RNA sequence: GGGAACGACUCGAGUAGAGUCGAAAAGAUAUGGACUUUAUACCAUGAACUACGAUCCGACUCGGAAACGAGUCGAAGAUCGCAUGGGAGAAAGUCCUAAGUCAAAGCUCCAUGUUCGCAUGGAGCACCAGAUCAGGUUGUUCGCAACCUGAUCUGGAAAAGAAACAACAACAACAAC
Reactivity to 2A3 in 0.01 (KOAc 150mM, MgCl2 10mM, bicine 150mM(pH8.5), 24C), signal-to-noise 2, nucleotides 027 to 126: g090a050u100a080u150g000g000a000c000u000u050u050a120u160a120c010c020a020u000g050a140a200c170u260a090c300g000a010u020c010c000g000a010c000u000c010g020g020a100a100a060c020g000a010g020u020c000g000a030a040g000a000u010c000g060c030a030u000g030g040g020a130g240a040a000a010g000u020c020c000u050a110a010g080u050c060a160a130a040g000c010u000c020c010a010u020g040u060u130c300g000c220a000u000g010g000a000g030c000a010
Reactivity to DMS in 0.01 (KOAc 150mM, MgCl2 10mM, bicine 150mM(pH8.5), 24C), signal-to-noise 2, nucleotides 027 to 126: g020a080u010a300u020g000g030a040c010u010u010u000a030u000a250c020c010a010u000g010a220a120c220u030a300c000g030a000u000c130c000g000a040c000u000c010g000g000a090a090a140c000g030a010g040u000c000g000a050a030g030a010u000c000g050c010a000u000g000g000g010a150g000a050a030a010g000u000c000c000u000a020a070g010u000c050a080a110a080g030c000u000c000c010a000u000g020u000u030c210g000c000a020u000g010g000a000g030c000a010
Chemical mapping of a 177-nucleotide RNA with 2A3 and DMS. Reactivities are given for positions 27 through 126. DMS adducts were read by reverse transcription with MarathonRT. For DMS, 1,128 sequencing reads were counted.